Chemical mapping of a 177-nucleotide RNA with DMS and 2A3. The DMS profile rests on 2,491 reads. The data come from the RNA Mapping Database (RMDB), library OK2TST.
[RMDB]
RNA sequence: GGGAACGACUCGAGUAGAGUCGAAAACCACAUAAAAUACAGUGGAAAUCUACAAUAAUAAAAUCCCUAUUCCUAUGUCUAUGGGGAAAUAAACAGGAUGGGGACUGUCCUUUUAAGGGGCUUUCCCUGGAUAUGUAGAAUUCGUUCUACAUAUCCAAAAAGAAACAACAACAACAAC
Reactivity to DMS in 0.01 (KOAc 150mM, MgCl2 10mM, bicine 150mM(pH8.5), 24C), signal-to-noise 3, nucleotides 027 to 126: c010c000a060c060a110u010a060a090a100a100u000a070c120a110g010u000g000g000a140a150a060u000c050u000a100c070a090a080u010a070a080u010a070a100a120a180u000c000c000c000u000a130u000u010c020c050u000a100u020g020u000c060u000a020u000g020g010g000g020a020a040a080u000a030a050a060c120a040g020g000a030u010g000g000g000g000a020c030u000g010u000c050c040u000u000u000u010a080a150g000g000g000g010c010u000u000u000c000c000c000
Reactivity to 2A3 in 0.01 (KOAc 150mM, MgCl2 10mM, bicine 150mM(pH8.5), 24C), signal-to-noise 3, nucleotides 027 to 126: c000c030a000c000a020u300a070a180a120a040u230a050c050a030g010u010g020g070a140a080a110u060c040u170a110c070a070a140u200a220a020u070a090a170a010a050u010c010c010c000u030a070u050u070c010c010u080a080u190g140u070c070u060a060u080g000g000g040g070a050a040a120u100a010a050a020c050a010g070g030a070u100g010g000g000g000a000c000u010g000u000c010c000u080u090u050u190a110a110g000g010g010g030c050u000u000u030c000c000c010
Description
The reactions ran in a buffer of 150 mM KOAc, 10 mM MgCl2 and 150 mM bicine (pH 8.5), at 24 C. Values cover nucleotides 27 to 126.